[RMDB]
RNA sequence: GGGAACGACUCGAGUAGAGUCGAAAAGGCAAUUACUUCGGUAAUUGCCAUAUAAACUUGAGAAAAGAAGGGCGCAACUCAAGAAUAUUGCGAAAUAAACAAACAACGAGAGCUUCGGCUCUCGUAACGGUAGGCAAGUAUUCGUACUUGCCUACCGAAAAGAAACAACAACAACAAC
Reactivity to 2A3 in 0.01 (KOAc 150mM, MgCl2 10mM, bicine 150mM(pH8.5), 24C), signal-to-noise 1, nucleotides 027 to 126: g020g000c000a000a000u000u010a040c020u050u140c230g010g000u010a010a020u010u000g000c010c000a010u000a000u010a000a010a000c000u010u050g000a010g000a070a220a080a070g190a020a210g110g010g110c080g090c060a040a010c000u000c030a010a010g040a210a080u050a030u090u070g030c030g110a040a050a070u300a050a130a030c090a050a040a020c100a030a000c020g010a000g000a010g000c000u000u040c150g070g000c000u000c000u000c000g000u010a000a000